[RMDB]
RNA sequence: GGGAACGACUCGAGUAGAGUCGAAAACAGGGAUCAGUCUACCUGUGGAUAAUUGGAAGAUAAAACAAUGACUUCUUUUGACCCAGGGCUGCAGAACAAGGGCUUCUCAUGAAGUGUGGCCCAAGGGAGUAAACAGGAAGAAAUUGCUCCCACACAAUAUCAUAAAUAGGUUCGCCUAUUUAUGAUAAAAAGAAACAACAACAACAAC
Reactivity to 2A3 in 0.01 (KOAc 150mM, MgCl2 10mM, bicine 150mM(pH8.5), 24C), signal-to-noise 7, nucleotides 027 to 156: c030a050g010g000g020a060u090c020a010g030u010c020u050a090c010c000u000g010u060g030g010a140u120a210a060u180u100g040g010a020a010g030a070u160a190a130a050a020c120a080a150u190g080a100c010u010u010c010u010u110u040u100g080a080c010c010c020a010g010g010g000c010u030g000c010a030g060a170a040c070a100a090g070g030g040c020u100u020c050u060c080a130u260g060a040a050g040u030g010u020g040g010c000c000c030a010a060g010g000g000a020g010u020a010a070a060c040a030g020g050a040a040g030a030a080a030u070u020g000c000u010c000c050c010a010c000a000c000a020a140
Reactivity to DMS in 0.01 (KOAc 150mM, MgCl2 10mM, bicine 150mM(pH8.5), 24C), signal-to-noise 3, nucleotides 027 to 156: c020a070g020g010g010a150u010c040a160g040u010c030u010a100c030c010u000g000u000g010g020a210u000a070a110u000u010g030g000a070a110g020a210u000a130a150a130a130c100a080a100u000g010a200c020u000u010c010u000u000u000u000g000a220c000c000c030a160g010g040g030c040u000g010c060a130g010a070a140c110a080a070g000g040g040c060u000u000c010u000c070a130u000g010a040a100g000u010g030u000g000g030c000c000c000a050a080g010g000g000a090g010u000a050a040a110c060a050g020g010a070a120g010a020a130a100u010u000g010c040u010c000c000c010a100c050a020c090a050a180